[RMDB]
RNA sequence: GGGAACGACUCGAGUAGAGUCGAAAAGUGGCUGGCCAACAUCACAGUGAGUGAAUGUCAUAGUGGUAGGAAUGUCACAGUGGUAAGAGUGGAAUUGGAACAGUUUAUAUGAAAGCAUGGACAGGGAUUACUAGUAUCAAUGAUAGUCUUUGAUGUACUGAGGUAGCUCAUUCGUGAGCUACCUCAGAAAAGAAACAACAACAACAAC
Reactivity to DMS in 0.01 (KOAc 150mM, MgCl2 10mM, bicine 150mM(pH8.5), 24C), signal-to-noise 2, nucleotides 027 to 156: g020u000g020g060c020u020g000g050c140c040a100a060c040a070u010c020a040c010a210g050u010g010a080g050u010g030a090a090u000g000u020c030a070u010a250g040u000g020g030u010a090g020g000a070a120u010g000u000c040a050c020a120g030u030g000g010u000a040a080g010a080g090u040g000g000a040a110u010u020g010g050a070a070c010a090g040u010u000u000a080u000a050u010g010a140a040a080g010c060a080u000g000g010a070c020a050g010g010g000a050u000u000a040c070u010a080g020u000a110u000c110a110a080u010g010a100u000a060g000u000c010u020u010u000g040a050u000g020u000a170
Reactivity to 2A3 in 0.01 (KOAc 150mM, MgCl2 10mM, bicine 150mM(pH8.5), 24C), signal-to-noise 2, nucleotides 027 to 156: g080u050g020g000c010u000g050g030c070c010a010a060c010a100u040c050a020c030a040g090u060g160a070g010u040g080a150a070u120g020u020c030a030u090a110g030u020g040g000u010a040g010g100a150a040u080g040u010c010a020c040a050g020u030g040g090u040a060a020g020a020g020u060g000g050a060a070u120u090g030g030a000a020c000a010g020u080u090u100a170u020a030u050g060a100a020a000g020c020a030u080g040g020a030c010a020g040g020g000a010u000u080a040c000u030a020g070u050a050u130c030a020a020u110g060a050u050a030g060u020c000u020u050u030g010a090u060g050u020a040
The data come from the RNA Mapping Database (RMDB), library OK3TST. Chemical mapping of a 207-nucleotide RNA with DMS and 2A3. For 2A3, 1,042 sequencing reads were counted. DMS adducts were read by reverse transcription with MarathonRT. For DMS, 2,202 sequencing reads were counted.